[RMDB]
RNA sequence: GGGAACGACUCGAGUAGAGUCGAAAAUGAGACAAACACGCUUCACAAUGUGCGGCAAAGAAACAUUGUUUAUGCAAAGGCACUUCGCAAUGUGUGCACAAACAUUGCUUAUUCAAACACGCUUCACAAAAGAAUCAGUGGUUCGCCACUGAUUCAAGCGUUAAACUAUGUUCGCAUAGUUUAACGCAAAAGAAACAACAACAACAAC
Reactivity to 2A3 in 0.01 (KOAc 150mM, MgCl2 10mM, bicine 150mM(pH8.5), 24C), signal-to-noise 9, nucleotides 027 to 156: u160g030a030g040a040c070a030a130a010c070a020c070g010c010u010u010c010a000c000a010a020u010g010u010g010c010g030g040c070a100a080a080g090a030a040a000c020a010u010u010g060u030u070u100a110u100g060c050a040a070a090g160g000c010a010c010u030u020c030g000c010a010a010u000g010u000g030u030g020c120a010c080a140a030a000c000a010u010u000g000c000u080u090a150u110u140c100a050a110a040c070a030c100g100c070u110u110c080a060c050a120a100a040a040g000a000a000u000c000a000g000u000g020g040u030u030c120g050c040c000a000c000u000g000a000u000u000c000a000a000
Reactivity to DMS in 0.01 (KOAc 150mM, MgCl2 10mM, bicine 150mM(pH8.5), 24C), signal-to-noise 2, nucleotides 027 to 156: u010g000a110g050a120c050a140a120a120c140a070c050g010c040u000u000c080a070c080a090a090u000g040u010g000c020g020g000c060a100a130a090g020a060a040a040c010a020u020u010g000u000u000u000a030u020g000c000a080a110a180g010g000c010a070c060u010u000c210g000c160a070a060u000g010u010g020u000g010c030a030c020a010a050a030c000a030u000u000g000c000u000u010a060u000u000c070a160a140a070c070a110c060g040c060u000u010c020a090c080a050a080a070a180g000a020a010u000c000a020g040u000g000g020u000u000c300g030c020c000a040c000u000g000a030u000u000c000a010a070
This 207-nucleotide RNA was probed chemically with 2A3 and DMS. For 2A3, 13,132 sequencing reads were counted. For DMS the reverse transcriptase was MarathonRT. The DMS profile rests on 4,068 reads.